[RMDB]
RNA sequence: GGGAACGACUCGAGUAGAGUCGAAAAGAUAAUGUCUUCGGACAUUAUCCACGCCUAAAGGGUUUAAUUAAUUAGCUAAGCCUGCUAAUUAAAAUGGCAUUAACAACUGUCCAUUCGUGGACAGUAACGAUCUACCGAUAUUCGUAUCGGUAGAUCGAAAAGAAACAACAACAACAAC
Reactivity to 2A3 in 0.01 (KOAc 150mM, MgCl2 10mM, bicine 150mM(pH8.5), 24C), signal-to-noise 3, nucleotides 027 to 126: g000a000u010a020a010u010g010u000c030u050u100c250g090g000a010c010a000u000u000a000u000c000c000a070c060g050c000c020u080a130a090a040g200g030g010u150u100u020a060a060u020u050a030a030u010u010a040g020c010u060a160a090g160c040c100u040g020c020u020a030a030u080u050a030a040a050a070u100g030g000c060a040u140u100a090a040c040a040a020c010u000g000u000c000c000a030u010u080c180g100u030g000g000a000c000a000g010u010a010a000
Reactivity to DMS in 0.01 (KOAc 150mM, MgCl2 10mM, bicine 150mM(pH8.5), 24C), signal-to-noise 3, nucleotides 027 to 126: g000a010u000a000a000u010g010u000c000u000u010c230g060g010a000c000a000u000u000a010u010c000c050a110c220g020c000c000u020a060a080a100g030g000g000u010u000u000a140a160u000u000a000a010u000u000a010g010c020u010a080a200g020c190c150u000g020c010u000a000a010u000u010a010a010a080a110u000g000g000c040a100u010u010a040a040c200a090a060c000u000g010u010c000c010a030u010u010c180g000u000g000g010a000c000a000g020u000a010a140